[RMDB]
RNA sequence: GGGAACGACUCGAGUAGAGUCGAAAAUCUGGACCGUUCGCGGUCCAGAAACUACCGAGAAUGCGACUCGGUAUAUAAACGCAACCCAUGGAAACAAGGGAACACUCUGCUGCUUCGGCAGCAGAAAGUUGUAAAGAUCAUUCGUGAUCUUUACAACAAAAGAAACAACAACAACAAC
Reactivity to DMS in 0.01 (KOAc 150mM, MgCl2 10mM, bicine 150mM(pH8.5), 24C), signal-to-noise 5, nucleotides 027 to 126: u000c000u000g010g010a010c000c000g040u000u010c210g020c010g030g020u000c000c000a000g010a010a080a100c110u000a250c010c000g000a010g020a040a080u000g020c040g000a070c000u000c010g010g000u010a020u010a040u010a020a030a030c030g020c030a040a300c020c010c010a140u010g000g000a110a090a160c020a040a070g020g000g010a140a090c170a090c130u000c010u000g010c020u000g000c000u000u010c240g030g000c010a010g010c000a000g000a010a050a070
Reactivity to 2A3 in 0.01 (KOAc 150mM, MgCl2 10mM, bicine 150mM(pH8.5), 24C), signal-to-noise 6, nucleotides 027 to 126: u020c000u000g000g010a010c010c000g020u030u030c280g020c020g130g010u010c000c000a000g000a000a000a000c010u040a040c000c010g000a000g010a060a090u060g020c020g050a040c020u000c000g000g050u010a000u000a000u010a030a010a000c010g010c020a030a090c000c020c010a030u040g030g050a100a060a050c030a080a090g010g010g020a070a010c050a020c050u010c000u000g000c000u000g000c010u020u050c210g130g000c000a000g000c000a000g000a000a000a000